[RMDB]
RNA sequence: GGGAACGACUCGAGUAGAGUCGAAAACGUCGGCGCGACAUGCACUGCACAUCGGCUCUGGAGAACACCCUCGGGUGCCACCUGAUGUGAGCUGUCCUGCUUGGCGUCAGGCAGAAAUAUGGCGUGCUUGAUUGCAAGGCUUCGGCCUUGCAAUCAAAAAAGAAACAACAACAACAAC
Reactivity to 2A3 in 0.01 (KOAc 150mM, MgCl2 10mM, bicine 150mM(pH8.5), 24C), signal-to-noise 2, nucleotides 027 to 126: c070g030u060c020g010g000c030g000c030g010a040c000a010u080g000c030a020c080u270g030c030a000c000a000u020c000g000g000c010u000c000u020g000g000a020g000a060a010c030a010c030c040c000u120c260g080g020g000u000g000c040c000a090c040c030u010g020a040u000g000u000g000a010g000c030u000g040u070c010c000u000g000c000u020u200g030g000c010g010u020c000a000g020g020c000a020g030a140a100a010u300a110u100g000g040c000g040u020g020c050
Reactivity to DMS in 0.01 (KOAc 150mM, MgCl2 10mM, bicine 150mM(pH8.5), 24C), signal-to-noise 1, nucleotides 027 to 126: c020g020u010c000g010g040c000g000c180g020a030c040a040u060g060c100a180c040u040g050c010a000c030a020u000c000g000g000c040u020c000u000g000g000a060g000a180a300c020a000c030c000c030u030c300g040g000g010u000g010c030c000a030c130c000u000g000a010u000g000u000g000a030g000c030u000g000u000c020c040u010g000c020u000u020g010g000c000g000u000c000a000g000g000c080a010g030a110a120a140u070a030u000g000g010c010g010u000g000c050

Chemical mapping of a 177-nucleotide RNA with 2A3 and DMS. 2A3 adducts were read by reverse transcription with SuperScript II with manganese. The reactions ran in a buffer of 150 mM KOAc, 10 mM MgCl2 and 150 mM bicine (pH 8.5), at 24 C.